[RMDB]
About this RNA: Conditions: 150 mM KOAc, 10 mM MgCl2 and 150 mM bicine (pH 8.5), 24 C. An RNA of 177 nucleotides, treated with DMS and read out base by base. The DMS profile rests on 615 reads. The data come from the RNA Mapping Database (RMDB), library OK2TRN. DMS (dimethyl sulfate) methylates the pairing face of unpaired adenines and cytosines.
RNA sequence: GGGAACGACUCGAGUAGAGUCGAAAAUUUAUUGCUUUGAGAUGGACCCGCGGCGCAUUAGCUAGUUGGUAAGGUAACGGCUUACCAAGGCAACGAUGCGUAGCCGACCUGAGAGGGUGAUCGGCCAAUGCGAUACGGGUUUCGACCCGUAUCGCAUAAAAGAAACAACAACAACAAC
Reactivity to DMS in 0.01 (KOAc 150mM, MgCl2 10mM, bicine 150mM(pH8.5), 24C), signal-to-noise 1, nucleotides 027 to 126: u010u010u010a080u040u040g030c090u000u000u020g020a080g010a020u000g010g000a200c020c010c010g070c190g030g020c000g020c010a020u000u010a190g000c000u000a130g020u020u010g020g000u000a020a020g000g070u020a050a080c300g000g000c000u000u000a020c000c000a030a030g000g000c010a130a050c210g000a050u020g020c020g030u000a090g030c000c020g000a060c030c010u000g000a230g010a230g010g070g000u000g000a110u000c060g030g030c020c300a130